Structure probing data (DMS and 2A3) for a 177-nucleotide construct. The RNA was probed in 150 mM KOAc, 10 mM MgCl2 and 150 mM bicine (pH 8.5) at 24 C. For DMS the reverse transcriptase was MarathonRT. The data come from the RNA Mapping Database (RMDB), library TTRDEL. For DMS, 3,529 sequencing reads were counted.
RNA sequence: GGGAACGACUCGAGUAGAGUCGAAAAGAUAUGGACUGCCUUCGAUAAGCUGGGUUCGGAAACGAACCUCAGCUUUUGACGAAGAUGUCCUAAGUCAAAGUAACUGCGAGUUCGCUCGCAGUUACAACCUGGUUGAAUAGUUCGCUAUUCAACCAGGAAAAGAAACAACAACAACAAC
Reactivity to DMS in 0.01 (KOAc 150mM, MgCl2 10mM, bicine 150mM(pH8.5), 24C), signal-to-noise 3, nucleotides 027 to 126: g010a020u010a270u010g010g000a010c000u000g010c200c010u010u000c010g010a190u000a030a010g010c000u010g010g010g010u000u000c000g000g000a030a040a120c010g010a010a000c010c000u010c030a010g000c000u000u000u000u000g010a150c070g000a030a010g000a070u000g000u000c010c000u000a010a120g010u000c010a100a110a120g010u000a020a000c000u010g000c000g010a010g020u000u010c240g020c000u000c000g010c010a000g010u000u000a000c010a050a090
Reactivity to 2A3 in 0.01 (KOAc 150mM, MgCl2 10mM, bicine 150mM(pH8.5), 24C), signal-to-noise 2, nucleotides 027 to 126: g020a000u040a010u070g000g010a010c000u090g090c040c000u000u020c010g140a180u050a300a020g010c010u010g020g020g060u000u010c030g000g010a040a020a030c010g000a000a010c000c000u130c020a000g020c000u010u000u010u020g010a000c000g000a010a000g000a010u020g000u020c000c010u030a120a010g000u010c040a220a040a030g000u000a000a000c000u000g010c020g000a010g030u070u080c190g120c100u000c000g020c000a000g000u000u000a010c000a000a010